An RNA of 177 nucleotides, treated with DMS and 2A3 and read out base by base. The 2A3 profile rests on 2,164 reads.
RNA sequence: GGGAACGACUCGAGUAGAGUCGAAAAAAAAGAUAUGGAUCCUUCGAGGCUGAUGACCAUAUGGAGGUGUAUAUCGGAAACGAUAUACGCGAAGUAUGCAAGGCCUUUCGGGAUCCUAAGUCAAAAACUCCUAUGACUAGUUCGCUAGUCAUAGGAGAAAAGAAACAACAACAACAAC
Reactivity to DMS in 0.01 (KOAc 150mM, MgCl2 10mM, bicine 150mM(pH8.5), 24C), signal-to-noise 2, nucleotides 027 to 126: a030a040a110a060g000a080u000a300u000g000g000a020u010c000c000u000u000c300g000a020g010g000c000u020g000a050u000g020a220c300c010a000u000a010u000g000g010a300g020g010u000g000u000a000u000a000u000c000g000g010a070a070a070c000g020a000u000a000u000a000c000g020c000g020a300a220g010u000a000u010g000c000a060a140g030g020c000c000u000u000u000c140g000g010g000a000u010c000c030u000a020a050g020u020c010a120a050a110a100a110
Reactivity to 2A3 in 0.01 (KOAc 150mM, MgCl2 10mM, bicine 150mM(pH8.5), 24C), signal-to-noise 1, nucleotides 027 to 126: a000a000a000a060g040a050u080a060u100g000g000a000u010c010c010u040u060c020g000a010g020g000c000u040g060a300u110g050a090c030c060a010u010a000u040g140g070a300g300g000u000g010u030a020u010a000u000c010g000g050a010a060a010c020g000a040u010a000u010a000c010g000c020g010a020a000g010u010a000u000g020c010a020a220g000g000c000c000u000u000u010c000g000g000g020a000u020c000c000u010a000a010g010u000c000a000a050a110a130a170